Record summary
Conditions: 150 mM KOAc, 10 mM MgCl2 and 150 mM bicine (pH 8.5), 24 C. An RNA of 177 nucleotides, treated with DMS and read out base by base.

[RMDB]
RNA sequence: GGGAACGACUCGAGUAGAGUCGAAAAGAUAUGGAAUUAUGGGAGGCAACAUUCGGAAACGAAUGCUGCCGAGGAUCAUACUUCCUAAGUCAAAAGCUGCAGAAUACGUUCGCGUAUUCUGCAGCAAGUAAGACAGGUUGUUCGCAACCUGUCUUACAAAAGAAACAACAACAACAAC
Reactivity to DMS in 0.01 (KOAc 150mM, MgCl2 10mM, bicine 150mM(pH8.5), 24C), signal-to-noise 1, nucleotides 027 to 126: g000a010u010a030u020g010g000a030a000u000u000a010u000g000g000g000a010g000g020c010a020a030c010a000u010u000c000g020g000a000a000a030c010g030a000a000u010g010c030u000g040c010c010g000a170g010g010a120u000c000a010u000a010c120u000u010c010c020u020a000a130g010u000c010a140a090a060a100g000c000u000g010c000a010g000a010a020u000a000c000g010u010u000c240g030c000g010u030a000u000u000c000u010g000c000a010g000c000a010a030